[RMDB]
RNA sequence: GGGAACGACUCGAGUAGAGUCGAAAACGUGCGUACUGGGCCGCCGGCACAAUGUUCAACCCAGCCGUCUCAGAGGACGCGGUUCGACCACGAUCAGCCAGCCGGUCAGCGGGGUCCUCCUAGCUAGGAUUAUAAUAGUCUUCGGACUAUUAUAAUCAAAAGAAACAACAACAACAAC
Reactivity to DMS in 0.01 (KOAc 150mM, MgCl2 10mM, bicine 150mM(pH8.5), 24C), signal-to-noise 6, nucleotides 027 to 126: c090g020u000g010c070g020u010a080c070u000g010g010g010c050c060g020c040c040g000g010c040a070c090a090a070u010g010u000u010c120a110a120c040c020c020a120g010c080c030g010u000c040u000c100a120g010a090g010g010a040c040g010c050g000g000u000u010c110g010a040c030c030a070c070g010a070u010c080a110g000c040c050a080g010c040c050g000g000u000c070a050g010c040g010g010g010g010u000c010c030u000c020c050u000a080g020c090u000a110g010
Reactivity to 2A3 in 0.01 (KOAc 150mM, MgCl2 10mM, bicine 150mM(pH8.5), 24C), signal-to-noise 4, nucleotides 027 to 126: c020g050u060g040c030g040u060a100c030u070g030g020g020c030c020g030c020c020g030g000c010a020c030a060a140u120g010u130u120c030a040a090c020c010c010a000g030c030c030g060u040c030u030c070a070g030a070g070g050a020c020g010c030g140g030u020u050c080g020a030c000c030a030c050g030a110u090c010a010g040c030c020a010g040c030c040g000g030u020c030a010g030c020g030g050g010g000u010c010c000u010c000c010u040a040g000c020u080a060g170
An RNA of 177 nucleotides, treated with DMS and 2A3 and read out base by base. For 2A3, 7,277 sequencing reads were counted. The DMS profile rests on 9,032 reads. Reactivities are given for positions 27 through 126. The reactions ran in a buffer of 150 mM KOAc, 10 mM MgCl2 and 150 mM bicine (pH 8.5), at 24 C.